[RMDB]
RNA sequence: GGGAACGACUCGAGUAGAGUCGAAAAGCAUUGGGAAAGUUAUUCAAAAGUGCAUCAAAACUUUCCCUAAACGAAAUCAAAAUCGUUAUGAUGCACUUUUGACAUCGAUUAAGAUGAAUAGACACAAAUGUGAUUAUCGUUUCGACGAUAAUCACAUAAAAGAAACAACAACAACAAC
Reactivity to 2A3 in 0.01 (KOAc 150mM, MgCl2 10mM, bicine 150mM(pH8.5), 24C), signal-to-noise 1, nucleotides 027 to 126: g060c020a140u160u300g040g020g050a040a000a160g040u100u100a160u060u080c000a020a000a000a000g000u010g000c000a000u020c000a000a010a040a180c050u050u050u000c000c000c000u000a000a000a000c010g000a070a000a020u200c060a080a120a000a140u010c010g040u050u040a050u170g000a000u000g040c000a020c050u000u000u000u020g020a000c010a000u000c040g080a160u240u190a140a060g000a000u000g040a050a060u100a060g080a040c050a000c010a110a140
Reactivity to DMS in 0.01 (KOAc 150mM, MgCl2 10mM, bicine 150mM(pH8.5), 24C), signal-to-noise 2, nucleotides 027 to 126: g000c090a170u010u000g000g010g000a050a030a240g010u000u010a100u000u000c010a010a010a010a010g000u000g000c000a000u020c000a070a080a110a130c170u010u000u000c000c000c000u000a020a030a010c020g010a010a070a090u000c300a100a090a100a100u000c000g000u000u000a270u000g000a010u000g010c000a000c000u000u000u000u000g000a020c050a000u000c000g000a100u000u010a090a070g010a000u010g000a100a060u000a050g000a150c160a030c200a030a040

An RNA of 177 nucleotides, treated with 2A3 and DMS and read out base by base. For 2A3 the reverse transcriptase was SuperScript II with manganese. The data come from the RNA Mapping Database (RMDB), library M2PK90. DMS adducts were read by reverse transcription with MarathonRT. The RNA was probed in 150 mM KOAc, 10 mM MgCl2 and 150 mM bicine (pH 8.5) at 24 C. The 2A3 profile rests on 973 reads.